[RMDB]
Structure probing data (2A3) for a 207-nucleotide construct.
2A3 adducts were read by reverse transcription with SuperScript II with manganese.
The reactions ran in a buffer of 150 mM KOAc, 10 mM MgCl2 and 150 mM bicine (pH 8.5), at 24 C.

RNA sequence: GGGAACGACUCGAGUAGAGUCGAAAAGCAUCGACGACGGUCCUGCCAUGAGACCUUAACGAGGACAUGUCGCCUCGAAUGGCGUCGGGGAGCCGGCAGCUUACCCCAAGGAUGAGCGCCUAAUGCCUAUACCCGAUUCGCUUCGGCGAAUCGGGAACUACACGUGGUGGUUCGCCACCACGUGUAGAAAAGAAACAACAACAACAAC
Reactivity to 2A3 in 0.01 (KOAc 150mM, MgCl2 10mM, bicine 150mM(pH8.5), 24C), signal-to-noise 2, nucleotides 027 to 156: g000c010a060u080c060g070a060c000g030a010c100g010g030u030c010c020u050g110c060c000a170u130g030a090g040a170c020c000u070u040a100a050c020g010a030g000g010a000c020a160u140g060u110c070g010c020c040u000c000g010a050a110u080g000g010c000g060u070c000g000g000g000g000a000g010c010c030g130g000c030a050g010c010u050u150a300c030c020c000c010a010a030g090g060a120u160g040a040g020c010g010c000c030u030a100a070u040g000c020c050u060a050u090a170c000c000c010g010a000u010u000c020g000c000u070u030c180g100g020c000g000a000a010u000c000g000g010g000a000a010